[RMDB]
RNA sequence: GGGAACGACUCGAGUAGAGUCGAAAAGAAAGAAAGAAAGACUCGCAGAGGCUCUUGACCUGGGACUCGGACAGCUGCUUGCACUCGUUCAGCUGCUCGAUCCACUGGUCCAGCUCCUUGGUGAAAAGCUGUUAGCGCCAUUCGUGGCGCUAACAGCAAAAGAAACAACAACAACAAC
Reactivity to 2A3 in 0.01 (KOAc 150mM, MgCl2 10mM, bicine 150mM(pH8.5), 24C), signal-to-noise 1, nucleotides 027 to 126: g030a030a140a000g060a000a160a000g050a000a070a000g060a100c010u060c020g030c000a030g000a000g000g000c040u000c010u000u030g020a020c000c000u000g000g000g000a020c080u000c020g000g000a000c010a000g020c000u050g090c040u100u290g060c040a200c190u140c070g210u200u040c000a000g000c000u000g030c000u030c020g000a000u000c020c000a140c100u060g000g050u060c010c000a000g000c010u050c050c000u000u140g080g000u030g060a000a000a170a000